[RMDB]
Record summary:
Structure probing data (2A3 and DMS) for a 177-nucleotide construct. The DMS profile rests on 11,328 reads.
RNA sequence: GGGAACGACUCGAGUAGAGUCGAAAAGCUCACUUUGCUUCCAUUUGAAGGUGUGUGGUCUCGUGGACAAGAGAAUCUACUUUUCUCCACACUUGAGUGAGAGAGGCCCCCGGGAUGGCUUACCUGGUCUUUCUAUUACUUUCGAGUAAUAGAAAGAAAAAGAAACAACAACAACAAC
Reactivity to 2A3 in 0.01 (KOAc 150mM, MgCl2 10mM, bicine 150mM(pH8.5), 24C), signal-to-noise 5, nucleotides 027 to 126: g000c010u020c040a020c030u060u080u200g050c010u090u020c070c040a270u120u060u300g070a050a020g040g010u050g010u000g000u020g060g030u000c020u010c070g020u020g010g000a030c060a180a120g060a010g060a250a100u030c030u050a090c000u050u040u030u040c050u000c030c000a010c010a020c000u030u110g030a010g010u030g020a040g000a010g020a030g080g040c020c000c020c000c020g030g010g020a060u070g110g000c040u070u050a060c000c000u010g040g020
Reactivity to DMS in 0.01 (KOAc 150mM, MgCl2 10mM, bicine 150mM(pH8.5), 24C), signal-to-noise 7, nucleotides 027 to 126: g000c010u000c030a030c030u000u000u010g010c040u000u000c020c250a180u010u000u010g010a080a050g010g020u000g020u000g010u000g000g010u000c020u000c200g010u000g000g010a020c100a090a120g010a130g000a100a130u000c100u000a050c030u000u000u010u000c060u000c060c000a030c020a050c070u010u000g010a050g010u000g010a050g000a110g010a110g020g010c020c010c020c020c020g010g000g000a070u010g010g000c080u010u010a060c030c020u000g000g000